[RMDB]
RNA sequence: GGGAACGACUCGAGUAGAGUCGAAAAGAGGCGAAAUAAUUCCCAUCUCCUGUGUACGGCCGGAGAUGGGUCUGGCCGUACUAAUAAGCCUCAUAGUGACGAGAGUCACGAAUUCUGGAUAGCCUAUGGUAGUCGGCUAUCCUGUGACUACCGUAGACCUCCUACUAAUGUUCGCAUUAGUAGGAGGAAAAGAAACAACAACAACAAC
Reactivity to DMS in 0.01 (KOAc 150mM, MgCl2 10mM, bicine 150mM(pH8.5), 24C), signal-to-noise 2, nucleotides 027 to 156: g020a070g040g040c010g010a120a120a140u000a120a170u000u000c000c030c020a110u000c040u000c020c010u060g000u010g000u000a040c060g050g010c020c010g030g000a060g010a110u000g070g040g000u000c000u000g010g060c040c010g030u020a070c010u000a060a130u000a050a210g000c000c000u040c040a120u000a160g000u000g020a070c000g010a190g000a300g000u000c010a020c000g000a100a080u010u000c140u000g010g020a130u000a060g010c030c000u010a100u000g000g000u020a090g020u000c220g000g010c030u000a060u000c090c040u030g000u000g040a050c000u000a030c010c010g060u000a110g010a130
Reactivity to 2A3 in 0.01 (KOAc 150mM, MgCl2 10mM, bicine 150mM(pH8.5), 24C), signal-to-noise 5, nucleotides 027 to 156: g000a000g000g010c030g070a070a020a100u170a040a060u110u030c020c020c000a050u060c110u080c040c070u130g040u010g010u090a010c030g020g000c000c000g040g020a030g020a080u300g080g010g050u000c000u000g010g000c000c020g000u000a010c000u000a020a080u050a030a000g000c000c010u000c000a030u140a030g120u150g040a000c020g020a020g000a000g200u000c000a000c000g030a100a060u210u070c060u090g010g010a010u000a020g020c000c010u070a070u090g150g040u080a110g110u060c040g010g020c020u010a020u000c020c000u000g000u020g000a020c010u040a130c020c010g010u020a040g120a100